[RMDB]
RNA sequence: GGGAACGACUCGAGUAGAGUCGAAAAUCGCAAAACCGCGGCAAGUGGAGUUAGCGAGAGGAGGCAGGGUUUUGGCUUCCUUAAGCAAUCGGUCACCGAGAAGGUGUGGUCGUUACCGUGAAAUUCCGUGACAAAAUAACGUUCGCGUUAUUUUGAAACUAAGGGUACGUUUCGACGUACCCUUAGUAAAAGAAACAACAACAACAAC
Reactivity to DMS in 0.01 (KOAc 150mM, MgCl2 10mM, bicine 150mM(pH8.5), 24C), signal-to-noise 3, nucleotides 027 to 156: u000c020g030c050a090a040a160a120c060c030g040c020g010g030c030a090a120g050u000g010g000a140g000u000u010a160g020c000g000a300g000a020g000g020a040g020g040c040a110g050g060g010u000u000u010u000g010g040c010u010u000c020c010u010u010a010a300g010c030a040a090u000c030g020g030u000c060a110c040c010g010a130g000a140a120g000g020u020g010u000g020g030u010c020g040u010u000a020c040c030g000u000g040a090a090a130u050u000c020c000g030u010g000a300c030a000a000a010a020u000a010a000c010g000u010u020c260g010c080g010u000u000a000u000u000u010u000g000a110a070
Reactivity to 2A3 in 0.01 (KOAc 150mM, MgCl2 10mM, bicine 150mM(pH8.5), 24C), signal-to-noise 4, nucleotides 027 to 156: u050c020g010c010a010a020a030a070c040c020g020c000g090g030c110a120a090g050u030g040g080a110g010u080u080a030g030c010g000a030g000a000g030g010a000g010g010c020a030g070g130g040u090u130u190u130g120g000c000u000u010c000c000u010u010a020a010g000c020a040a070u070c010g010g000u030c010a000c010c050g040a040g070a160a100g120g020u120g010u020g080g030u010c020g010u020u060a070c070c000g020u050g090a050a060a070u060u040c020c050g040u060g050a040c020a000a010a010a000u000a000a000c010g020u040u030c260g000c000g120u010u010a010u010u020u010u010g020a050a010